This 207-nucleotide RNA was probed chemically with DMS and 2A3. DMS adducts were read by reverse transcription with MarathonRT. For 2A3, 4,511 sequencing reads were counted. Reactivities are given for positions 27 through 156. The RNA was probed in 150 mM KOAc, 10 mM MgCl2 and 150 mM bicine (pH 8.5) at 24 C.
[RMDB]
RNA sequence: GGGAACGACUCGAGUAGAGUCGAAAAGGUGGCUUCGGCCACCGUGUGACCUUUGUGUAUGUUUGCGUGUUGUCAGCUGGUUUGUGGCCCAUUGGGCCAUGAUCAGCUUGGAUUUACACGUGAUAUACACUCUGGUGAGGACGGGUUUCGACCCGAAUUCUUUACAUCCAUUCGUGGAUGUAAAGAAAAAAGAAACAACAACAACAAC
Reactivity to DMS in 0.01 (KOAc 150mM, MgCl2 10mM, bicine 150mM(pH8.5), 24C), signal-to-noise 3, nucleotides 027 to 156: g020g050u010g010g030c010u000u010c300g050g020c020c000a020c000c000g010u000g000u000g000a050c010c000u000u000u030g020u000g000u000a010u000g020u000u000u010g100c000g010u000g010u000u000g010u000c000a080g010c000u010g010g010u000u000u000g110u000g010g000c000c010c010a300u000u000g070g060g040c040c000a000u000g010a010u000c010a010g020c000u000u010g010g010a060u000u010u010a020c010a000c000g020u000g020a020u000a020u000a030c010a030c010u010c060u000g020g050u000g020a080g010g000a130c020g000g010g030u000u010u000c140g030a150c000c010c000g000a020a070
Reactivity to 2A3 in 0.01 (KOAc 150mM, MgCl2 10mM, bicine 150mM(pH8.5), 24C), signal-to-noise 5, nucleotides 027 to 156: g020g000u020g000g030c040u080u140c300g120g000c030c000a000c000c000g000u110g060u050g060a020c000c000u000u010u020g000u020g000u000a000u000g130u000u050u230g020c000g000u000g000u000u010g010u000c000a010g000c010u010g070g130u050u130u300g040u030g000g010c010c050c140a300u170u300g020g000g000c000c000a000u000g010a000u010c000a000g000c000u000u060g010g000a020u120u170u230a000c000a000c000g000u000g000a000u000a000u000a000c010a000c000u000c000u000g000g030u040g080a150g050g080a050c010g010g000g000u030u160u300c260g090a060c000c000c000g000a010a010